[RMDB]
RNA sequence: GGGAACGACUCGAGUAGAGUCGAAAAGGGUUUUGGUUCGCCAAAACCCAAAAUAAAAAGUACGAAAGGCAUCGUACGCCAAAAAGAUCGAAAGAUCAAAAAAAACUCAUUCCUUCGGGAAUGAGAACUCUACAGUUAUGUUCGCAUAACUGUAGAGAAAAGAAACAACAACAACAAC
Reactivity to DMS in 0.01 (KOAc 150mM, MgCl2 10mM, bicine 150mM(pH8.5), 24C), signal-to-noise 2, nucleotides 027 to 126: g010g000g010u000u000u030u010g010g000u010u010c200g040c000c000a010a020a010a000c000c000c000a000a010a030a060u000a030a080a080a110a070g030u000a000c000g000a000a070a110g020g000c210a060u000c000g010u000a010c000g020c050c090a030a060a060a110a090g000a010u000c000g010a100a040a080g000a030u000c000a000a020a000a020a070a090a120a100c000u000c000a010u000u000c000c000u000u000c230g060g010g000a030a000u000g000a010g000a000a090
Reactivity to 2A3 in 0.01 (KOAc 150mM, MgCl2 10mM, bicine 150mM(pH8.5), 24C), signal-to-noise 4, nucleotides 027 to 126: g010g000g010u010u010u010u010g030g010u030u090c180g080c020c000a010a000a000a010c000c000c000a000a020a000a010u030a000a030a010a000a000g000u000a000c000g020a060a020a060g200g020c020a020u010c010g000u000a010c000g000c000c000a060a150a070a030a020g000a000u020c000g030a070a030a020g000a000u000c000a050a040a020a000a010a000a020a030c000u000c000a000u000u010c000c010u020u050c220g130g000g000a000a000u000g000a000g000a000a010